[RMDB]
RNA sequence: GGGAACGACUCGAGUAGAGUCGAAAACAAGCAUUCGCACUUUCGCGUGCGUGGUCGGUUGUCGAAUACUCGCCACGUCUGAUAUAACAUCCGUAAGCCUAUCACGGUCGCUUUUGUCGAGUUCGUCUAAUUCUCGCUUGGCCGUCGUAUGGAUAACGACAUAGCGGCUAUUCGUAGCCGCUAUGUCAAAAGAAACAACAACAACAAC
Reactivity to 2A3 in 0.01 (KOAc 150mM, MgCl2 10mM, bicine 150mM(pH8.5), 24C), signal-to-noise 1, nucleotides 027 to 156: c020a110a000g100c020a090u050u180c020g080c020a040c090u010u300u170c140g010c000g000u070g000c020g050u000g000g030u200c200g000g030u030u000g050u110c070g030a030a000u070a080c070u070c150g000c020c000a050c100g010u020c010u030g090a000u000a000u080a240a040c000a040u000c130c000g070u000a030a030g000c000c000u040a080u070c070a000c000g000g000u000c120g040c220u100u140u000u260g100u240c000g000a040g010u010u230c050g000u000c100u030a060a040u090u000c000u000c060g020c040u160u170g000g060c000c010g040u060c010g000u020a010u230g110g000a070u020a050a000c030
This 207-nucleotide RNA was probed chemically with 2A3. It was measured as part of the RMDB library OK3TST. Conditions: 150 mM KOAc, 10 mM MgCl2 and 150 mM bicine (pH 8.5), 24 C.